Chemical mapping of a 177-nucleotide RNA with DMS and 2A3. DMS adducts were read by reverse transcription with MarathonRT. 2A3 adducts were read by reverse transcription with SuperScript II with manganese.
RNA sequence: GGGAACGACUCGAGUAGAGUCGAAAAGUAUAUACAAAUAUGAAUACGAUAGAACGAAAGAAUAAAGUUAUGACUGUGCUCAGUGCUGUAGGCCUAGAUGGCAAAGGUGAUUUUACUCCUAGUAAACCAUAACCGGGAUCUUCGGAUCCCGGUUAUGAAAAGAAACAACAACAACAAC
Reactivity to DMS in 0.01 (KOAc 150mM, MgCl2 10mM, bicine 150mM(pH8.5), 24C), signal-to-noise 1, nucleotides 027 to 126: g000u000a010u000a120u100a150c120a180a090a160u000a060u030g000a080a070u000a030c050g030a010u020a170g000a150a040c100g000a110a120a110g000a030a060u000a030a070a050g010u020u000a010u020g020a000c120u000g060u010g000c000u030c030a030g010u000g000c050u000g020u000a100g000g080c030c000u000a070g000a070u050g000g000c000a040a010a110g000g050u000g000a000u000u000u000u000a040c050u000c010c000u000a130g030u010a050a060a180c190
Reactivity to 2A3 in 0.01 (KOAc 150mM, MgCl2 10mM, bicine 150mM(pH8.5), 24C), signal-to-noise 2, nucleotides 027 to 126: g050u030a060u000a000u000a030c130a030a200a010u300a090u220g070a060a000u060a100c060g050a070u070a150g270a080a000c060g000a040a150a050g100a000a150u290a110a050a000g000u040u120a000u110g020a070c050u010g010u000g040c010u000c020a000g000u000g180c000u210g020u150a000g060g000c000c000u080a120g000a030u140g040g000c030a060a000a000g030g030u000g020a110u000u020u000u010a010c000u000c020c030u030a110g000u070a120a030a080c030